Chemical mapping of a 207-nucleotide RNA with 2A3 and DMS. The RNA was probed in 150 mM KOAc, 10 mM MgCl2 and 150 mM bicine (pH 8.5) at 24 C. The 2A3 profile rests on 2,046 reads. 2A3 adducts were read by reverse transcription with SuperScript II with manganese. Source: RMDB library OK3TST, as collected in RNAgym.
RNA sequence: GGGAACGACUCGAGUAGAGUCGAAAACUUCGCAACGAAGCAAUCAGAAAUAACGCCAUAGACGCCAUUCUCUCACUACCCAUCGACGACAAGUCACCCCACGAAGUCCACGUUAAAGAACCCAGGCGCAGCAAAGCGCAGAAUGACCGUAUGUGGAAUGAUACCCCUAUUUCGAUAGGGGUAUCAUAAAAGAAACAACAACAACAAC
Reactivity to 2A3 in 0.01 (KOAc 150mM, MgCl2 10mM, bicine 150mM(pH8.5), 24C), signal-to-noise 3, nucleotides 027 to 156: c020u050u050c040g020c110a080a130c130g010a030a000g010c040a040a090u150c050a050g130a070a140a030u180a120a050c070g050c060c020a070u090a040g040a020c040g020c020c010a030u060u020c040u000c020u010c020a030c040u040a040c010c010c020a050u050c040g040a040c000g030a040c050a090a020g020u020c020a080c000c010c020c000a050c050g050a060a000g020u000c010c020a020c020g010u030u100a070a130a070g050a050a030c040c040c010a030g080g000c020g000c020a070g080c040a090a130a020g010c020g000c010a000g050a060a050u120g040a040c040c000g030u060a090u090g020u020g030g000a020
Reactivity to DMS in 0.01 (KOAc 150mM, MgCl2 10mM, bicine 150mM(pH8.5), 24C), signal-to-noise 2, nucleotides 027 to 156: c040u020u000c010g030c100a180a140c080g000a060a040g060c030a130a090u010c040a140g010a140a120a120u020a090a070c080g030c040c010a110u010a130g020a060c010g010c010c030a140u000u000c010u020c010u040c040a060c080u010a130c020c010c010a100u020c010g000a080c030g010a150c070a050a090g000u000c000a180c010c020c000c030a090c080g020a020a110g010u000c010c000a050c010g000u010u000a040a100a140g000a090a130c050c010c020a070g020g020c010g030c040a080g010c100a070a070a230g020c060g020c010a060g000a030a050u000g000a050c010c030g030u000a070u000g030u000g000g000a100